This 177-nucleotide RNA was probed chemically with 2A3 and DMS. It was measured as part of the RMDB library M2PK50. Values cover nucleotides 27 to 126. Values are in units of 0.01, from 0 to 300, in steps of 10. 2A3 adducts were read by reverse transcription with SuperScript II with manganese. The RNA was probed in 150 mM KOAc, 10 mM MgCl2 and 150 mM bicine (pH 8.5) at 24 C.
RNA sequence: GGGAACGACUCGAGUAGAGUCGAAAAUUCAAGCGAUUCGUCGCUUGAACCUGAGGAGACUCAAGCAAUAUUGUUCCCUUUUGCUUUUGCUUUCCUCUUUUAAGUAGUAGUGCUUCGGCACUACUAACAAUUAGCUCCGAUUCGUCGGAGCUAAUUGAAAAGAAACAACAACAACAAC
Reactivity to 2A3 in 0.01 (KOAc 150mM, MgCl2 10mM, bicine 150mM(pH8.5), 24C), signal-to-noise 2, nucleotides 027 to 126: u040u010c000a000a020g010c010g010a000u060u110c200g030u000c010g130c000u000u000g000a010a020c000c010u010g010a010g010g010a010g020a010c000u000c020a000a010g000c000a020a040u050a040u130u300g040u040u050c010c000c070u000u000u000u010g020c010u000u000u010u000g030c010u030u000u000c000c000u040c010u080u060u030u110a100a020g000u010a010g000u010a000g000u000g010c010u020u050c230g070g000c010a000c010u000a000c000u010a000a020
Reactivity to DMS in 0.01 (KOAc 150mM, MgCl2 10mM, bicine 150mM(pH8.5), 24C), signal-to-noise 3, nucleotides 027 to 126: u010u000c000a010a000g010c000g020a020u000u010c180g020u000c000g020c000u000u000g000a010a070c020c010u010g010a010g020g000a010g010a020c010u000c040a010a000g010c000a010a020u000a040u010u010g000u000u000c000c000c010u010u010u000u000g010c000u000u000u000u010g000c150u000u000u000c000c010u000c000u010u010u000u010a070a170g010u000a010g010u000a010g010u000g000c000u000u010c190g030g000c000a000c000u000a000c000u000a030a140